[RMDB]
RNA sequence: GGGAACGACUCGAGUAGAGUCGAAAAGAGGUAAUCGAAAAGGGGUUCAUGACCAAGGACCUUGCGCUGUGCAUCUACGGAUCCGCAAUGAAGGACGACAGCUACAUGUUCACGGAUGACUUCCUGGAAGAUACGAGUCUUUCGAGACUCGUAUCUUAAAAGAAACAACAACAACAAC
Reactivity to 2A3 in 0.01 (KOAc 150mM, MgCl2 10mM, bicine 150mM(pH8.5), 24C), signal-to-noise 1, nucleotides 027 to 126: g060a000g000g050u070a110a080u100c070g020a050a020a080a120g070g000g000g070u090u010c050a040u180g120a050c000c020a020a090g010g010a020c000c000u000u000g050c080g020c020u020g000u070g040c010a040u000c020u060a040c120g040g000a090u010c020c040g000c020a000a110u170g050a060a020g040g020a000c050g030a020c030a020g000c000u080a050c020a150u110g000u030u060c000a030c040g050g010a000u010g020a000c020u000u110c000c000u010g050g110
Reactivity to DMS in 0.01 (KOAc 150mM, MgCl2 10mM, bicine 150mM(pH8.5), 24C), signal-to-noise 3, nucleotides 027 to 126: g010a100g020g010u000a070a040u020c080g000a070a070a110a060g010g000g000g010u000u000c040a040u000g040a120c100c070a120a090g010g000a040c050c030u000u000g020c080g020c090u000g010u000g010c140a080u000c020u000a100c150g030g010a070u010c080c020g020c070a060a060u020g000a100a080g000g010a150c090g030a090c090a030g020c040u000a050c080a030u000g010u000u000c080a070c150g000g000a090u000g010a090c110u010u000c000c010u000g020g000

The data come from the RNA Mapping Database (RMDB), library OK2TST. This 177-nucleotide RNA was probed chemically with 2A3 and DMS. The reactions ran in a buffer of 150 mM KOAc, 10 mM MgCl2 and 150 mM bicine (pH 8.5), at 24 C. Reactivities are given for positions 27 through 126.